[RMDB]
RNA sequence: GGGAACGACUCGAGUAGAGUCGAAAAGUAUGGAUGCCACCGUGACGGCUCAAUCACACAAGUGCCAACGAUAACGAGGCGAUCGCUAUUGCUGCGUAACUGACGGCCUGACGGUCUGACGUUACAAAAAACGAAAAGUGGUUCGCCACUUUUCGAACAUAGCAGAUCGGUUCGCCGAUCUGCUAUGAAAAGAAACAACAACAACAAC
Reactivity to DMS in 0.01 (KOAc 150mM, MgCl2 10mM, bicine 150mM(pH8.5), 24C), signal-to-noise 1, nucleotides 027 to 156: g030u000a010u000g000g000a070u000g010c000c010a090c070c040g000u000g030a300c120g030g000c030u000c030a080a160u000c040a060c110a150c190a140a140g020u000g050c010c010a060a000c090g040a050u000a000a090c040g010a080g000g030c080g010a090u000c010g000c000u010a070u000u000g000c000u010g020c070g010u000a010a000c020u000g010a300c300g000g000c000c030u000g000a160c190g020g070u010c070u010g000a300c200g010u000u000a070c020a000a000a050a040a020a050c000g010a000a000a000a020g040u000g030g020u000u030c300g000c020c000a000c000u000u010u010u010c010g020a030a080
Reactivity to 2A3 in 0.01 (KOAc 150mM, MgCl2 10mM, bicine 150mM(pH8.5), 24C), signal-to-noise 3, nucleotides 027 to 156: g090u060a030u180g040g050a030u070g030c030c020a060c090c090g020u030g100a050c110g050g000c030u030c050a070a120u160c030a040c060a040c020a140a100g030u070g060c020c030a080a040c050g020a090u050a090a090c020g000a060g060g000c060g030a090u050c020g020c100u080a080u120u200g050c020u050g010c030g040u010a000a010c000u010g010a010c020g020g000c000c010u160g110a060c110g020g000u020c020u000g020a000c010g000u000u020a010c010a000a030a000a000a010a000c000g000a010a010a000a000g000u000g020g040u060u090c160g020c070c000a000c000u010u000u000u010c000g000a010a010